Source information: The record gives the reactivity of an RNA of 177 nucleotides to 2A3 and DMS. For DMS, 3,135 sequencing reads were counted. Conditions: 150 mM KOAc, 10 mM MgCl2 and 150 mM bicine (pH 8.5), 24 C. For DMS the reverse transcriptase was MarathonRT.
[RMDB]
RNA sequence: GGGAACGACUCGAGUAGAGUCGAAAAGAUAUGGAUCGCCACCAAGUUCUUGGAUUUAGAUUCGGAAACGAAUCUUGUCAGAAUGGUGCGAUCCUAAGUCAAAGAACGUUGCUUCGGCAACGUUCAAGAAACCUUAUAGCUUCGGCUAUAAGGUUUCAAAAGAAACAACAACAACAAC
Reactivity to 2A3 in 0.01 (KOAc 150mM, MgCl2 10mM, bicine 150mM(pH8.5), 24C), signal-to-noise 3, nucleotides 027 to 126: g040a010u070a030u120g010g000a010u010c020g130c250c020a030c020c020a140a140g180u150u080c100u300u300g200g010a090u300u300u160a020g010a010u010u000c000g000g010a080a030a020c010g000a010a000u000c010u010u000g030u000c060a080g070a210a170u060g000g000u010g000c000g010a000u000c000c010u000a000a000g000u000c060a100a120a170g030a010a010c000g000u000u010g020c010u090u070c300g090g000c000a000a000c020g000u000u000c000a000a000
Reactivity to DMS in 0.01 (KOAc 150mM, MgCl2 10mM, bicine 150mM(pH8.5), 24C), signal-to-noise 3, nucleotides 027 to 126: g000a050u010a300u010g010g000a020u010c010g010c220c060a030c000c010a080a220g020u010u010c050u000u000g030g010a020u000u010u000a010g010a020u000u000c000g000g020a090a080a220c000g010a020a010u000c000u000u000g000u010c010a020g000a060a070u000g010g000u010g000c030g000a020u010c000c000u000a010a110g010u000c030a100a120a190g010a020a010c000g000u010u000g000c000u000u040c300g030g000c020a020a000c000g010u000u000c000a050a110